[RMDB]
RNA sequence: GGGAACGACUCGAGUAGAGUCGAAAAUUUAGGCUUUCGAGCCUAAAAGGCCAUCCUAAGUCCGACGAUCGUCCGAUGGAACAACAGCUAUCGGAAACGAUAGACAUGUUCCGCGGACGGGAGGAUAUGGAAGUUGAGUAGACUUUCGAGUCUACAACACGGAAUAAAGUUUCGACUUUAUUCCGUGAAAAGAAACAACAACAACAAC
Reactivity to DMS in 0.01 (KOAc 150mM, MgCl2 10mM, bicine 150mM(pH8.5), 24C), signal-to-noise 2, nucleotides 027 to 156: u000u000u010a000g030g010c010u000u000u010c220g030a110g050c000c000u000a010a020a050a130g020g030c080c030a230u000c010c020u000a070a240g030u010c010c000g020a180c090g010a100u000c000g010u000c010c000g000a100u000g030g010a020a010c000a020a120c090a260g010c000u000a010u010c000g040g010a140a040a230c010g040a040u000a010g020a040c100a300u010g000u000u000c000c000g040c000g010g000a050c000g000g000g010a070g010g010a080u000a180u000g000g010a070a140g000u000u000g000a110g000u000a020g000a020c000u000u000u000c190g030a100g030u000c000u000a030c000a030a300
Reactivity to 2A3 in 0.01 (KOAc 150mM, MgCl2 10mM, bicine 150mM(pH8.5), 24C), signal-to-noise 1, nucleotides 027 to 156: u020u000u000a020g010g020c020u000u100u150c300g090a020g000c000c000u000a030a010a000a020g040g020c040c010a050u000c000c010u040a100a080g020u000c000c030g040a170c020g000a250u010c000g000u000c010c000g210a260u210g030g010a000a000c000a020a030c040a050g060c000u010a000u000c000g040g000a180a060a030c020g000a000u000a000g050a060c030a070u040g000u000u000c000c020g010c010g000g000a010c000g000g000g000a000g020g000a000u000a030u090g030g050a150a100g050u090u060g020a040g020u020a010g010a010c000u090u130u080c260g030a020g000u000c000u030a010c000a010a020